The record gives the reactivity of an RNA of 207 nucleotides to 2A3. Values cover nucleotides 27 to 156. Conditions: 150 mM KOAc, 10 mM MgCl2 and 150 mM bicine (pH 8.5), 24 C.
RNA sequence: GGGAACGACUCGAGUAGAGUCGAAAAGUUUGGCGAGGCUCCUAUACAAACACAGGUUGCUGAUCUGACGACGUCGAGAGACGCCCAAGAUUAGGACAGGAUAUAUCGAACCAAGGUAUAUCCCCAUAAAACUCGGAACACUUCGGUGUUCCGAGAAGAACCCAUUAUCCUUCGGGAUAAUGGGUUCAAAAGAAACAACAACAACAAC
Reactivity to 2A3 in 0.01 (KOAc 150mM, MgCl2 10mM, bicine 150mM(pH8.5), 24C), signal-to-noise 1, nucleotides 027 to 156: g000u020u040u120g030g000c060g060a060g020g050c030u020c030c050u080a060u060a220c140a130a230a050c090a030c040a060g190g000u110u180g000c050u030g000a030u000c000u030g020a030c050g010a000c020g000u000c000g010a010g000a000g000a060c000g050c000c000c000a020a020g030a080u090u070a020g000g030a010c040a090g000g000a000u010a000u010a000u030c080g030a090a140c090c060a130a090g040g000u000a000u000a000u060c040c000c020c000a030u210a070a110a040a000c000u030c030g000g000a000a000c010a000c030u040u100c190g050g000u000g010u000u000c000c020g000a030g000a030a000